[RMDB]
Chemical mapping of a 177-nucleotide RNA with 2A3 and DMS. The data come from the RNA Mapping Database (RMDB), library TTRDES. For 2A3, 10,722 sequencing reads were counted. Conditions: 150 mM KOAc, 10 mM MgCl2 and 150 mM bicine (pH 8.5), 24 C. For DMS, 3,785 sequencing reads were counted.
RNA sequence: GGGAACGACUCGAGUAGAGUCGAAAAGAUAUGGAUGCAUCAUUUCAGCUAUGAAGACCGUCGGAAACGACGGUUGGAGCUGGUGAGCAUCCUAAGUCAAAGCCCUUUAAGUUCGCUUAAAGGGCAACCACAUCAUAUCGUUCGCGAUAUGAUGUGGAAAAGAAACAACAACAACAAC
Reactivity to 2A3 in 0.01 (KOAc 150mM, MgCl2 10mM, bicine 150mM(pH8.5), 24C), signal-to-noise 3, nucleotides 027 to 126: g020a000u040a010u100g000g010a010u010g010c040a300u040c040a060u140u220u300c060a040g000c000u130a300u300g000a000a010g000a010c000c000g000u010c000g020g000a050a040a020c010g000a000c020g000g000u010u000g000g000a000g000c010u040g020g020u040g020a020g000c000a000u010c000c000u000a040a000g020u000c060a060a030a130g000c000c000c000u000u010u000a050a020g000u050u170c300g010c210u000u000a000a000a020g000g000g000c000a000a000
Reactivity to DMS in 0.01 (KOAc 150mM, MgCl2 10mM, bicine 150mM(pH8.5), 24C), signal-to-noise 3, nucleotides 027 to 126: g010a030u010a300u010g000g010a000u000g010c000a150u010c010a070u000u000u010c060a040g100c000u000a280u010g040a190a160g010a000c000c000g010u000c000g000g020a070a090a160c000g010a000c010g000g000u000u000g000g010a010g040c000u000g000g020u000g000a070g000c000a020u000c010c010u000a000a080g010u000c020a090a170a180g010c010c000c010u000u000u000a000a010g020u000u020c300g000c000u000u000a000a000a010g020g010g010c010a000a010